Record summary:
The record gives the reactivity of an RNA of 177 nucleotides to DMS and 2A3. Values are in units of 0.01, from 0 to 300, in steps of 10. It was measured as part of the RMDB libraries RFM100 and RFMREP. For DMS the reverse transcriptase was MarathonRT. Values cover nucleotides 27 to 126.

RNA sequence: GGGAACGACUCGAGUAGAGUCGAAAACGGAGAGAUCAUCAUUUUGUUCAUCUUAAUGCCCUUUUGUGUAGGAAAUUGAGGGAAGUUUAGGCUUCUCAACAUUUUAAGACGCCUAUGCAAGGGCUGGCAUUCUACGGUCAUUCGUGACCGUAGAAUGAAAAGAAACAACAACAACAAC
Reactivity to DMS in 0.01 (KOAc 150mM, MgCl2 10mM, bicine 150mM(pH8.5), 24C), signal-to-noise 3, nucleotides 027 to 126: c100g000g010a050g020a060g000a030u010c030a060u020c160a130u000u030u000u000g010u000u020c100a140u000c010u000u010a080a070u030g010c010c000c010u000u010u010u000g040u010g000u010a010g000g010a030a080a050u000u000g000a300g000g000g000a000a010g000u000u010u010a130g020g010c010u000u000c000u000c000a030a200c140a020u000u000u000u020a090a140g010a110c300g010c000c030u000a010u000g000c010a020a000g030g020g000c030u000g000g030
Reactivity to 2A3 in 0.01 (KOAc 150mM, MgCl2 10mM, bicine 150mM(pH8.5), 24C), signal-to-noise 8, nucleotides 027 to 126: c040g030g020a050g010a010g020a070u060c020a040u020c060a090u090u090u070u090g020u030u040c050a110u020c060u020u110a130a060u170g000c000c000c000u060u130u080u090g000u000g010u000a000g000g050a050a100a100u070u060g030a080g020g000g000a010a010g000u020u040u110a210g100g000c000u000u000c000u010c010a030a110c020a040u080u100u070u100a090a050g110a050c060g060c020c000u010a000u000g010c000a000a010g000g000g000c000u020g000g020